[RMDB]
RNA sequence: GGGAACGACUCGAGUAGAGUCGAAAAAUAAAGCACGGCAAGCACAUGAAGCACAUGAAGCAGAACAAGCACAUGAAGCAGUACAAGCACUACAAGCAGUAGAAGCAGCCGAAGCACAUGAAAAAAAGACAAUUAAGUACUUCGGUACUUAAUUGUCAAAAGAAACAACAACAACAAC
Reactivity to DMS in 0.01 (KOAc 150mM, MgCl2 10mM, bicine 150mM(pH8.5), 24C), signal-to-noise 2, nucleotides 027 to 126: a100u000a120a070a010g000c070a030c080g000g020c020a020a060g000c090a050c110a060u010g000a110a120g000c060a030c090a050u010g000a050a040g020c010a010g000a080a090c070a060a060g020c040a130c070a060u010g010a060a060g010c050a000g030u000a040c100a100a080g000c040a060c070u010a020c080a100a040g000c030a020g000u020a030g000a050a130g030c030a040g020c000c010g010a010a030g000c020a040c030a040u000g000a000a010a080a030a020a140a120
Reactivity to 2A3 in 0.01 (KOAc 150mM, MgCl2 10mM, bicine 150mM(pH8.5), 24C), signal-to-noise 1, nucleotides 027 to 126: a000u090a000a090a020g000c010a000c050g000g020c050a040a040g010c000a040c020a120u060g080a100a020g060c010a020c010a110u100g100a080a000g010c040a010g060a100a020c070a070a050g010c010a020c010a070u060g020a050a010g000c020a020g000u050a020c020a090a000g020c030a010c040u030a000c040a150a020g110c020a000g000u110a010g030a100a030g000c030a000g000c010c040g000a020a010g000c010a000c010a040u080g070a080a050a040a000a010a030a000
The record gives the reactivity of an RNA of 177 nucleotides to DMS and 2A3. Values are in units of 0.01, from 0 to 300, in steps of 10. For DMS the reverse transcriptase was MarathonRT. The RNA was probed in 150 mM KOAc, 10 mM MgCl2 and 150 mM bicine (pH 8.5) at 24 C. For 2A3, 1,498 sequencing reads were counted.